[RMDB]
RNA sequence: GGGAACGACUCGAGUAGAGUCGAAAAUCAGAUGAGACUAGACAUCAGACUAGAUAGUAUCACACUACCGGUACAUAGUAGAGACAUACAUAGAUGCGUAUGACACAUCAGAGGCGCGGGCCACCGACGCGCUGCUGAUAUUCGUAUCAGCAGCGCGAAAAGAAACAACAACAACAAC
Reactivity to 2A3 in 0.01 (KOAc 150mM, MgCl2 10mM, bicine 150mM(pH8.5), 24C), signal-to-noise 1, nucleotides 027 to 126: u080c000a000g020a070u090g030a000g050a060c020u020a040g020a020c040a030u080c040a000g080a090c010u040a050g020a080u070a070g070u080a030u080c030a030c000a000c130u070a020c010c050g000g010u060a050c070a070u090a040g030u090a020g030a020g000a090c010a070u060a010c020a010u120a040g100a070u200g050c030g010u090a080u060g030a040c050a000c000a120u020c020a030g000a040g100g000c020g020c000g010g030g010c010c000a050c040c010g100a030
Reactivity to DMS in 0.01 (KOAc 150mM, MgCl2 10mM, bicine 150mM(pH8.5), 24C), signal-to-noise 2, nucleotides 027 to 126: u010c090a110g000a130u020g000a100g000a120c030u000a040g000a090c060a060u000c040a050g010a160c040u000a140g010a110u000a080g000u000a140u020c090a130c180a080c020u010a040c000c010g000g010u010a110c090a080u000a060g020u000a060g010a120g000a040c090a050u000a070c050a080u000a040g010a070u000g020c080g070u020a010u000g010a120c100a080c030a000u000c040a040g000a080g020g000c050g000c040g000g030g010c020c040a070c020c070g000a140
Source information: Source: RMDB library OK2TRN, as collected in RNAgym. This 177-nucleotide RNA was probed chemically with 2A3 and DMS. The 2A3 profile rests on 1,071 reads. For DMS, 1,017 sequencing reads were counted. 2A3 adducts were read by reverse transcription with SuperScript II with manganese.